[RMDB]
RNA sequence: GGGAACGACUCGAGUAGAGUCGAAAAGGAGCUCUCGAACGCUCUCCCGACCGCUCGGAUGGGCCGCUUCCGGCAAGAGGGGCCGAAAGUGUGAAGGGAGAGACCGCUCCGAGAGUUGGGAGAAGAAAGGCUCUGACGUUCGCGUCAGAGAAAAGAAACAACAACAACAAC
Reactivity to DMS in 0.01 (KOAc 150mM, MgCl2 10mM, bicine 150mM(pH8.5), 24C), signal-to-noise 5, nucleotides 027 to 129: g050g020a060g030c060u020c030u010c050g030a040a070c110g030c020u010c010u050c000c010c010g000a250c150c030g050c040u000c100g040g020a140u080g000g000g090c000c000g110c020u020u010c000c000g050g000c110a110a100g030a000g000g000g000g000c030c000g000a070a080a010g040u060g050u000g040a000a160g050g020g020a040g030a020g010a030c090c040g020c000u010c060c030g010a030g010a060g020u000u000g000g000g000a110g030a060a080g000a020a060a040g040g000
Reactivity to 2A3 in 0.01 (KOAc 150mM, MgCl2 10mM, bicine 150mM(pH8.5), 24C), signal-to-noise 9, nucleotides 027 to 129: g070g010a020g000c000u000c010u010c030g010a020a010c010g010c010u000c000u000c000c000c000g020a050c040c010g070c030u040c030g250g140a210u150g070g030g010c000c020g090c020u050u040c030c020g060g000c010a050a020g070a040g070g060g040g010c000c000g080a100a080a020g050u100g040u120g100a080a050g000g000g000a010g000a010g000a010c050c030g050c070u030c040c000g000a010g000a000g000u060u080g030g010g010a070g010a080a010g030a020a060a010g040g000